[RMDB]
RNA sequence: GGGAACGACUCGAGUAGAGUCGAAAAAGGUAUUUGAUCAGGGACUUGAAAGGGGAUUUAAUUUUGACUUGUUGGACAUUGGUGGUGGUUUCAUGAAUGACAGCUUUGAUGGCGUAGCAGACCUUAUUCGCUCUGCCUUGGAUACUUAUUUUGAUCACUCGGAUAAUGACUUCGGUCAUUAUCCGAGAAAAGAAACAACAACAACAAC
Reactivity to 2A3 in 0.01 (KOAc 150mM, MgCl2 10mM, bicine 150mM(pH8.5), 24C), signal-to-noise 1, nucleotides 027 to 156: a000g180g040u180a180u060u150u180g060a090u110c040a000g120g020g000a020c020u090u150g170a000a070a040g040g000g010g010a020u140u050u180a080a010u020u180u100u080g010a040c010u000u060g010u020u000g020g020a000c060a130u030u070g020g000u040g000g010u010g000g060u030u110u150c050a050u130g100a090a010u060g050a000c000a000g050c020u110u000u140g030a020u150g040g000c010g000u000a090g000c000a000g000a010c000c000u150u000a110u110u160c000g000c040u000c020u100g090c000c010u000u000g040g000a000u000a100c040u100u000a020u190u200u160u120g040a060u090c020a000
Description:
The record gives the reactivity of an RNA of 207 nucleotides to 2A3.